[RMDB]
RNA sequence: GGGAACGACUCGAGUAGAGUCGAAAACCAAAAAUAAAAAGAAUCGUCUGAAACGAGGAACAAACUAAAAUGUAAAUUUUAGGUGUGACCGAGUGGAAGAUGAUUACUUUUUACCGUAAGUGUAUAUAAGAAACGGUAUUUUCGAAUACCGUUUCUUAAAAGAAACAACAACAACAAC
Reactivity to DMS in 0.01 (KOAc 150mM, MgCl2 10mM, bicine 150mM(pH8.5), 24C), signal-to-noise 1, nucleotides 027 to 126: c000c040a130a060a020a080a110u030a000a000a000a000a000g020a080a020u000c000g000u000c000u020g000a300a070a040c000g000a240g000g000a300a000c000a010a060a110c010u000a000a030a000a000u000g000u080a130a060a000u000u000u000u000a020g000g030u000g040u010g000a040c030c040g010a270g000u050g020g000a080a020g000a020u000g030a000u010u000a030c000u000u010u000u000u000a020c210c070g030u000a010a160g000u000g000u010a050u000a100u080
Reactivity to 2A3 in 0.01 (KOAc 150mM, MgCl2 10mM, bicine 150mM(pH8.5), 24C), signal-to-noise 2, nucleotides 027 to 126: c000c010a000a070a020a000a000u090a000a020a000a000a000g010a000a000u010c000g000u040c000u000g020a000a000a040c000g000a020g000g000a020a020c000a020a170a050c000u030a010a000a000a000u090g060u130a050a080a210u010u010u010u010a000g000g020u000g020u010g050a170c020c000g000a000g000u010g020g000a010a000g000a000u000g000a000u000u000a000c000u020u000u000u000u030a060c020c070g160u130a110a100g080u050g000u090a000u000a030u000